[RMDB]
RNA sequence: GGGAACGACUCGAGUAGAGUCGAAAACGCAGUUGUAAGUUGACAUAGUCCCAGGGCCAAGUACAGCGAUGCAACCCGGGACUACGUUAACUUCCAGCCUCAAAACGCUUCUGCUUCGGCAGAAGCGCUAACAAUACAUGUUCGCAUGUAUUGUUAGAAAAGAAACAACAACAACAAC
Reactivity to 2A3 in 0.01 (KOAc 150mM, MgCl2 10mM, bicine 150mM(pH8.5), 24C), signal-to-noise 6, nucleotides 027 to 126: c070g010c040a020g010u010u010g010u030a000a000g000u000u010g000a010c000a010u010a000g000u000c000c020c070a130g020g010g000c060c060a230a020g070u100a170c070a120g090c100g170a100u140g010c010a010a030c000c010c000g000g000g000a000c000u000a000c000g000u010u000a000a000c000u000u000c000c000a000g000c010c020u100c050a090a130a030a030c010g000c000u000u000c000u010g010c000u010u040c130g120g000c000a000g000a000a000g000c000g010
Reactivity to DMS in 0.01 (KOAc 150mM, MgCl2 10mM, bicine 150mM(pH8.5), 24C), signal-to-noise 7, nucleotides 027 to 126: c110g010c180a110g010u000u000g010u000a010a010g010u000u000g000a000c000a040u000a010g010u000c000c000c000a140g050g000g010c040c050a120a290g010u010a070c170a100g010c160g010a110u010g000c040a180a260c010c000c000g000g000g000a000c000u000a000c030g000u000u000a010a010c000u000u000c040c010a010g000c010c090u010c110a050a060a080a250c010g000c000u000u000c010u000g010c000u000u020c180g020g010c000a010g000a000a000g000c000g000
Background: An RNA of 177 nucleotides, treated with 2A3 and DMS and read out base by base. It was measured as part of the RMDB library RFMREP. For DMS, 9,690 sequencing reads were counted. Reactivities are rounded to 0.1 and cut off at 0 and 3. The RNA was probed in 150 mM KOAc, 10 mM MgCl2 and 150 mM bicine (pH 8.5) at 24 C.